This 177-nucleotide RNA was probed chemically with 2A3 and DMS.

[RMDB]
RNA sequence: GGGAACGACUCGAGUAGAGUCGAAAAGAUAUGGAGCUACCCUGCUUUUGACGGAAUAUCGGAAACGAUAUACCCGAUAAGCAGGUAGCUCCUAAGUCAAACUCCUCUCACUUCGGUGAGAGGAGAACCUUACAUCACACUUCGGUGUGAUGUAAGGAAAAGAAACAACAACAACAAC
Reactivity to 2A3 in 0.01 (KOAc 150mM, MgCl2 10mM, bicine 150mM(pH8.5), 24C), signal-to-noise 3, nucleotides 027 to 126: g020a000u050a040u130g000g000a000g020c010u000a020c120c090c060u020g000c000u140u220u260u170g060a020c020g000g020a030a010u000a000u020c010g010g040a070a070a020c020g000a000u010a000u030a120c000c020c020g050a080u060a190a040g000c010a000g000g000u000a000g010c000u000c000c000u020a010a000g000u000c000a010a030a090c000u010c000c000u000c000u000c010a020c000u040u100c190g140g000u000g000a000g010a000g000g000a000g000a000a000
Reactivity to DMS in 0.01 (KOAc 150mM, MgCl2 10mM, bicine 150mM(pH8.5), 24C), signal-to-noise 3, nucleotides 027 to 126: g000a020u010a290u000g020g020a010g000c000u000a020c090c090c060u000g010c000u010u000u020u000g000a300c300g000g000a120a010u000a010u000c000g000g000a140a050a110c020g020a000u000a000u000a070c000c010c000g000a130u000a000a020g010c000a010g000g000u010a000g020c000u000c000c000u000a000a020g040u000c040a100a120a160c010u000c000c000u000c000u000c000a000c010u000u000c220g010g000u000g000a000g000a010g000g000a000g000a010a050
For DMS, 1,756 sequencing reads were counted. The RNA was probed in 150 mM KOAc, 10 mM MgCl2 and 150 mM bicine (pH 8.5) at 24 C.